[RMDB]
RNA sequence: GGGAACGACUCGAGUAGAGUCGAAAAGACGAACUACUAUCUAUAGUUAAGGAUUUUUCUUCUUGCUAUCCACAAUAUGAUGUCGACGGUUUUUACUAUCAAAGGCAGGAGAAAGACAUCGCCAAUAAAAUCCAAAGACAUUCGUGUCUUUGGAUUUAAAAGAAACAACAACAACAAC
Reactivity to 2A3 in 0.01 (KOAc 150mM, MgCl2 10mM, bicine 150mM(pH8.5), 24C), signal-to-noise 1, nucleotides 027 to 126: g050a000c010g020a050a020c020u040a030c010u080a110u260c020u040a150u040a120g040u050u040a100a080g050g000a030u000u000u000u110u000c010u020u030c000u040u090g000c000u010a050u070c020c010a060c060a060a090u170a160u160g050a020u010g000u020c010g030a040c020g000g000u000u030u050u050u000a050c070u120a050u230c140a000a190a070g060g000c030a010g080g090a130g020a010a030a000g020a010c030a030u030c030g010c070c020a020a020u120a080
Reactivity to DMS in 0.01 (KOAc 150mM, MgCl2 10mM, bicine 150mM(pH8.5), 24C), signal-to-noise 3, nucleotides 027 to 126: g010a060c080g010a040a090c070u010a060c080u010a080u000c090u020a150u000a040g000u010u000a100a100g010g000a070u010u010u010u000u010c040u010u010c010u010u000g010c030u000a100u000c060c080a120c150a060a120u010a130u010g000a040u010g000u000c140g010a090c050g030g000u000u000u000u000u020a070c060u000a050u020c100a040a080a120g010g010c010a050g000g010a080g010a060a050a090g010a010c040a050u000c030g010c080c070a020a110u000a050